Structure probing data (2A3 and DMS) for a 207-nucleotide construct. The data come from the RNA Mapping Database (RMDB), library OK3TST. Conditions: 150 mM KOAc, 10 mM MgCl2 and 150 mM bicine (pH 8.5), 24 C. For 2A3, 1,640 sequencing reads were counted.
RNA sequence: GGGAACGACUCGAGUAGAGUCGAAAAACAAACAGGAUUUCUUGACUGAUUGGAGGUGAGGGUAUGACCAAAAGAAAGCAGUCAGGGAUGACUCCAAGGUUUUUGGUCUGAGCAAUUGGAAGAAUGGAAUUGUCAUUCACUAAAAUGGGGAAGGCUAGUAUUAAUCCUGGUUCGCCAGGAUUAAUACAAAAGAAACAACAACAACAAC
Reactivity to 2A3 in 0.01 (KOAc 150mM, MgCl2 10mM, bicine 150mM(pH8.5), 24C), signal-to-noise 3, nucleotides 027 to 156: a020c060a020a070a010c030a030g050g000a080u010u100u090c020u110u110g050a060c030u050g050a130u060u070g020g010a030g080g000u110g040a090g020g010g040u140a060u170g030a040c000c010a000a020a020a020g090a030a050a020g040c050a000g020u010c000a010g040g050g070a020u050g010a000c030u020c060c040a060a080g070g020u010u000u020u080u080g020g010u030c000u040g040a030g020c060a060a090u100u090g040g040a090a080g040a060a060u060g030g040a040a070u030u020g040u050c020a040u090u090c010a010c030u140a060a040a070a130u130g000g030g000g000a030a010g030g000c010u020a020
Reactivity to DMS in 0.01 (KOAc 150mM, MgCl2 10mM, bicine 150mM(pH8.5), 24C), signal-to-noise 2, nucleotides 027 to 156: a060c040a080a080a120c030a090g030g010a210u010u000u000c030u010u000g020a180c050u000g000a150u010u000g030g000a130g030g000u000g000a120g020g000g020u010a070u010g010a050c040c000a030a040a040a060g000a100a070a110g030c050a030g000u010c000a030g020g030g000a220u010g010a050c000u000c040c010a040a110g040g010u000u000u000u000u000g020g020u000c010u010g020a120g030c100a040a080u000u000g040g020a090a080g010a050a050u000g030g020a060a090u000u010g030u000c000a100u010u010c060a080c030u010a020a050a040a100u000g000g030g020g010a020a070g010g010c070u000a100